[RMDB]
RNA sequence: GGGAACGACUCGAGUAGAGUCGAAAACCAGAAAGUGACCGAGGGAGGUGCUAGGAUCGCGGGGGUACCGGUGGAGCCAUGGGAUGCUCCUCCCGAUUCCGUCCAUCCCUCCUCCCAGGGGGUCGCCGUUAUGAUUAUUCUUCGGAAUAAUCAUAACAAAAGAAACAACAACAACAAC
Reactivity to 2A3 in 0.01 (KOAc 150mM, MgCl2 10mM, bicine 150mM(pH8.5), 24C), signal-to-noise 4, nucleotides 027 to 126: c010c010a010g130a030a130a010g030u020g010a010c000c020g010a070g020g020g000a000g000g030u060g080c220u210a070g020g000a020u040c080g010c090g010g010g010g010g010u040a050c030c020g000g010u010g010g010a010g010c050c040a190u210g140g090g050a080u130g010c000u010c010c000u030c040c010c000g000a000u030u010c010c010g260u010c020c000a000u000c000c000c000u000c000c000u000c000c000c000a000g120g020g050g000g000u000c010g000c020c020
Reactivity to DMS in 0.01 (KOAc 150mM, MgCl2 10mM, bicine 150mM(pH8.5), 24C), signal-to-noise 6, nucleotides 027 to 126: c010c000a180g010a080a110a090g010u000g010a030c050c040g020a300g000g010g000a030g020g010u000g000c240u010a110g010g000a020u000c200g020c110g010g020g010g010g020u000a030c080c050g010g030u000g010g000a030g020c010c070a230u000g020g010g020a300u000g010c010u000c000c010u000c300c010c010g000a070u000u010c000c020g010u020c020c060a080u000c000c010c010u000c000c030u000c000c000c000a050g020g000g010g010g000u000c020g010c020c190
Notes:
The record gives the reactivity of an RNA of 177 nucleotides to 2A3 and DMS. DMS adducts were read by reverse transcription with MarathonRT. 2A3 adducts were read by reverse transcription with SuperScript II with manganese.